[RMDB]
An RNA of 177 nucleotides, treated with 2A3 and DMS and read out base by base. The RNA was probed in 150 mM KOAc, 10 mM MgCl2 and 150 mM bicine (pH 8.5) at 24 C. For DMS, 10,008 sequencing reads were counted. For 2A3 the reverse transcriptase was SuperScript II with manganese.
RNA sequence: GGGAACGACUCGAGUAGAGUCGAAAAGAUAUGGACGUGAACUACAGGAUAACAAGCAAUGAUGUCGGAAACGAUUGAGCUUGGAAGCCUGCACGUCCUAAGUCAAAUCACCAGUUCGCUGGUGAAACACCAAGUUAAUGUUCGCAUUAACUUGGUGAAAAGAAACAACAACAACAAC
Reactivity to 2A3 in 0.01 (KOAc 150mM, MgCl2 10mM, bicine 150mM(pH8.5), 24C), signal-to-noise 7, nucleotides 027 to 126: g020a020u070a050u150g000g000a000c010g020u010g020a100a080c080u180a070c300a010g000g000a010u050a200a120c010a010a000g010c010a070a300u210g050a060u150g070u020c010g010g040a060a070a040c010g010a000u010u090g020a010g000c000u000u010g000g020a060a070g030c000c000u000g000c000a000c000g000u000c000c000u000a030a000g000u000c020a010a020a190u040c000a000c000c000a000g010u060u070c300g040c140u010g010g000u020g000a040a010a000
Reactivity to DMS in 0.01 (KOAc 150mM, MgCl2 10mM, bicine 150mM(pH8.5), 24C), signal-to-noise 7, nucleotides 027 to 126: g000a040u000a300u010g000g000a010c000g010u010g000a070a040c100u000a300c020a010g000g000a020u010a200a230c000a000a010g010c010a160a130u010g020a090u010g000u000c010g000g000a090a080a170c010g010a010u000u000g000a090g000c010u000u000g000g010a080a160g000c000c000u000g000c000a010c010g000u010c000c000u000a020a060g000u010c040a080a100a160u000c000a000c000c000a010g000u000u020c270g020c000u010g000g010u000g000a010a080a170